[RMDB]
RNA sequence: GGGAACGACUCGAGUAGAGUCGAAAACAAGUUAAAUUGUCGUUCGCAGUUGUUUUAGUCGCUUUGGACUUUUGACCACGGAUGUACUGGCACUGGUGUUAAGAGCGAUAUGAGGAAGGUCGGUGCAGACUAAUAGACAGUUCGCUGUCUAUUAGUCAAAAGAAACAACAACAACAAC
Reactivity to 2A3 in 0.01 (KOAc 150mM, MgCl2 10mM, bicine 150mM(pH8.5), 24C), signal-to-noise 4, nucleotides 027 to 126: c020a020a040g110u170u200a100a150a180u210u100g010u010c010g010u010u030c080g000c140a040g020u080u060g050u020u110u030u130a030g010u030c020g000c060u080u040u070g020g010a030c000u110u080u050u180g060a060c010c010a030c040g040g000a060u050g020u100a030c020u040g020g000c010a010c040u020g040g020u060g070u160u100a080a030g020a010g030c030g000a010u030a070u120g040a030g020g020a050a020g030g010u050c040g010g000u030g000c010a010
Reactivity to DMS in 0.01 (KOAc 150mM, MgCl2 10mM, bicine 150mM(pH8.5), 24C), signal-to-noise 4, nucleotides 027 to 126: c060a090a090g000u010u000a070a070a140u010u010g010u000c020g010u000u000c020g020c040a100g020u000u000g010u000u000u000u010a070g030u000c030g000c090u000u000u000g000g010a090c050u000u000u010u010g010a080c010c040a050c080g000g000a070u000g000u010a030c060u000g000g000c030a030c040u000g000g010u000g020u010u010a080a090g000a030g000c020g000a030u000a060u000g010a110g000g000a070a060g010g010u000c040g010g010u000g020c120a140